RNA sequence: GGGAACGACUCGAGUAGAGUCGAAAAGAUAUGGAGUUACGAGGAUCAGGGCGACGAAGAACUCGGAAACGAGGGAGUCGAUCCUGGGAGUAACUCCUAAGUCAAAAGACAUGCUUCGGCAUGUCAAGUCAUAUGGAUUCUUCGGAAUCCAUAUGACAAAAGAAACAACAACAACAAC
Reactivity to 2A3 in 0.01 (KOAc 150mM, MgCl2 10mM, bicine 150mM(pH8.5), 24C), signal-to-noise 4, nucleotides 027 to 126: g040a010u070a040u160g000g000a000g010u000u000a020c050g110a240g110g050a040u040c010a000g000g000g030c020g030a020c030g130a300a140g020a060a030c000u000c010g000g010a060a070a020c020g010a000g020g020g020a020g010u010c010g030a150u100c000c000u000g000g000g010a030g000u000a000a000c000u010c000c000u000a020a000g020u000c020a030a030a030a110g010a000c000a000u010g000c010u100u110c290g140g000c020a000u010g000u000c000a000a010
Reactivity to DMS in 0.01 (KOAc 150mM, MgCl2 10mM, bicine 150mM(pH8.5), 24C), signal-to-noise 4, nucleotides 027 to 126: g000a030u010a300u020g000g000a020g010u000u000a010c000g000a120g010g000a080u000c010a010g000g000g020c020g010a020c010g000a110a130g000a110a190c010u000c000g000g010a090a060a160c000g010a020g010g000g010a110g020u000c000g020a040u010c000c000u000g000g010g000a090g010u000a000a000c000u000c000c000u000a000a040g000u010c040a100a050a130a140g000a010c000a000u000g000c000u000u020c220g000g000c000a010u000g000u000c000a030a050
Chemical mapping of a 177-nucleotide RNA with 2A3 and DMS.
The 2A3 profile rests on 10,505 reads.
The reactions ran in a buffer of 150 mM KOAc, 10 mM MgCl2 and 150 mM bicine (pH 8.5), at 24 C.